An RNA of 207 nucleotides, treated with 2A3 and DMS and read out base by base. For DMS, 5,217 sequencing reads were counted. High DMS reactivity at an A or C suggests that its Watson-Crick edge is free. The reactions ran in a buffer of 150 mM KOAc, 10 mM MgCl2 and 150 mM bicine (pH 8.5), at 24 C.
RNA sequence: GGGAACGACUCGAGUAGAGUCGAAAAGACGAGAUCCUCACCCGGACGCUCCACACGACCCCCACCGAAGACUUCCUCCCCGCGAUCCUCGCGGACGUGAGGAGCGACUGGGCCAGCUAGACGCUGACCUAGUCAAGACCCGCUCUGGCCUCGGCCAGAGAACCAUAAAUUUCGAUUUAUGGUUCUCAAAAGAAACAACAACAACAAC
Reactivity to 2A3 in 0.01 (KOAc 150mM, MgCl2 10mM, bicine 150mM(pH8.5), 24C), signal-to-noise 2, nucleotides 027 to 156: g080a020c070g030a000g010a100u040c010c010u030c040a110c000c020c010g030g010a010c040g050c100u020c010c030a030c020a040c090g170a190c030c000c050c000c040a040c030c040g050a060a010g040a100c040u120u040c020c010u010c010c000c010c000g000c000g020a060u140c030c070u070c040g010c010g030g020a050c030g060u120g000a010g000g000a000g000c020g000a000c000u000g000g000g000c000c010a000g000c010u090a110g030a210c100g000c020u000g010a010c000c010u010a000g000u000c000a000a010g030a000c020c000c040g040c060u050c020u050g000g000c020c020u030c080g030g000c010c020a000
Reactivity to DMS in 0.01 (KOAc 150mM, MgCl2 10mM, bicine 150mM(pH8.5), 24C), signal-to-noise 2, nucleotides 027 to 156: g020a110c050g010a120g000a140u000c010c040u010c060a140c060c040c050g020g030a120c030g030c030u000c000c020a120c030a120c050g000a210c000c000c010c020c010a090c080c010g020a090a100g010a080c050u010u000c030c020u000c020c000c000c030g020c030g000a040u010c090c150u000c050g040c080g010g000a020c090g020u030g010a040g010g000a050g030c020g010a020c010u010g030g010g010c000c000a010g010c010u010a160g020a160c200g000c010u010g010a000c050c010u000a010g020u000c010a070a130g000a140c000c020c020g010c040u000c030u000g020g030c000c020u000c120g040g020c010c020a060